RNA sequence: GGGAACGACUCGAGUAGAGUCGAAAAGACUUGAUGGUACUGCUGAUGCUGGUGGUGAUGCCGAUGGUGCGAGCUGGACGGUGGGUGCUACGGCAUCAUUGUCGUCGUCAUCGUCAUCAUCCAAGAAGUCGAAGGCUUCGUUCGCGAAGCCUUCGACAAAAGAAACAACAACAACAAC
Reactivity to 2A3 in 0.01 (KOAc 150mM, MgCl2 10mM, bicine 150mM(pH8.5), 24C), signal-to-noise 1, nucleotides 027 to 126: g050a040c040u070u070g060a060u080g020g140u080a060c000u010g000c080u130g020a050u010g000c050u080g020g140u040g000g000u000g000a000u010g000c020c000g080a120u070g000g130u060g000c000g030a090g000c040u130g060g140a040c000g020g060u060g040g140g000u010g000c000u000a010c030g080g000c000a030u000c000a000u040u010g030u000c020g050u020c000g010u050c000a010u000c000g000u000c000a080u000c000a030u060c010c020a070a020g020a080a000
Chemical mapping of a 177-nucleotide RNA with 2A3. Reactivities are given for positions 27 through 126. The data come from the RNA Mapping Database (RMDB), library RFM100. The 2A3 profile rests on 617 reads. Conditions: 150 mM KOAc, 10 mM MgCl2 and 150 mM bicine (pH 8.5), 24 C.